[RMDB]
RNA sequence: GGGAACGACUCGAGUAGAGUCGAAAACGGCGGCUUUGGUGACAGGCCAGCUGGCGGAGCUCCCGGCGGCGCCGGCGGCGACGCAGCCAAGAAGGCCUGAACGGGCGAUUCGCCUGUUUUGGACGCCACCAGGGUGGAGUUUCGACUCCACCCUGGUAAAAGAAACAACAACAACAAC
Reactivity to DMS in 0.01 (KOAc 150mM, MgCl2 10mM, bicine 150mM(pH8.5), 24C), signal-to-noise 1, nucleotides 027 to 126: c090g030g000c060g010g000c080u010u010u000g010g040u000g000a240c040a040g020g000c000c040a080g060c000u000g010g010c020g000g000a300g000c000u000c300c000c000g000g000c010g020g000c300g010c010c000g020g000c260g000g020c040g000a170c000g000c000a040g000c020c120a060a150g000a100a100g000g000c000c000u000g000a030a000c000g010g000g010c000g000a240u000u010c040g030c000c000u000g000u000u010u020u020g000g000a050c050g000c000c010
An RNA of 177 nucleotides, treated with DMS and read out base by base. Values cover nucleotides 27 to 126. Source: RMDB library OK2TST, as collected in RNAgym.